[RMDB]
RNA sequence: GGGAACGACUCGAGUAGAGUCGAAAAAGCGUUGACGUCGAAGCGAGAUAGUGCUGCACGUUGCCCGGCGGGUAUGGGCGGAUCUGGCGGAAGUCCAUGUCCAGAUGAUCAAUCGGCGCAUCUUCAAUCGGGAAGCGGCCACCACCCAAUGUCCACGCAAUACCCAUAAGUUCGCUUAUGGGUAUUGAAAAGAAACAACAACAACAAC
Reactivity to 2A3 in 0.01 (KOAc 150mM, MgCl2 10mM, bicine 150mM(pH8.5), 24C), signal-to-noise 6, nucleotides 027 to 156: a010g060c030g020u060u050g030a040c030g030u120c060g030a060a010g040c070g040a050g010a090u080a070g090u080g030c050u060g010c050a040c200g050u060u060g040c000c000c000g020g010c060g000g030g000u070a050u060g020g000g020c050g000g030a060u060c060u110g090g020c080g080g030a070a020g040u060c030c000a040u050g020u000c010c000a010g010a020u060g020a070u130c120a110a070u130c060g070g000c060g000c020a030u000c010u080u100c030a030a200u070c020g000g030g010a050a020g030c020g040g020c010c010a020c020c000a040c010c010c000a030a050u110g020u030c030c020a040c030g020
Reactivity to DMS in 0.01 (KOAc 150mM, MgCl2 10mM, bicine 150mM(pH8.5), 24C), signal-to-noise 3, nucleotides 027 to 156: a070g010c040g030u000u040g010a020c040g000u000c050g020a100a070g010c050g010a130g020a170u000a060g020u000g000c050u010g000c060a110c040g020u000u000g020c020c020c040g020g010c110g000g020g030u000a060u000g010g010g010c030g010g020a060u000c050u000g020g000c080g060g020a110a210g000u000c040c050a100u000g030u000c010c000a100g010a060u000g010a110u000c050a100a120u010c050g010g030c020g030c050a100u000c030u000u010c070a130a150u000c060g010g010g000a060a090g000c020g000g000c010c020a120c030c010a090c010c020c010a050a130u010g020u000c000c020a080c070g010
Structure probing data (2A3 and DMS) for a 207-nucleotide construct.
The DMS profile rests on 6,583 reads.
Reactivities are rounded to 0.1 and cut off at 0 and 3.
Conditions: 150 mM KOAc, 10 mM MgCl2 and 150 mM bicine (pH 8.5), 24 C.
For DMS the reverse transcriptase was MarathonRT.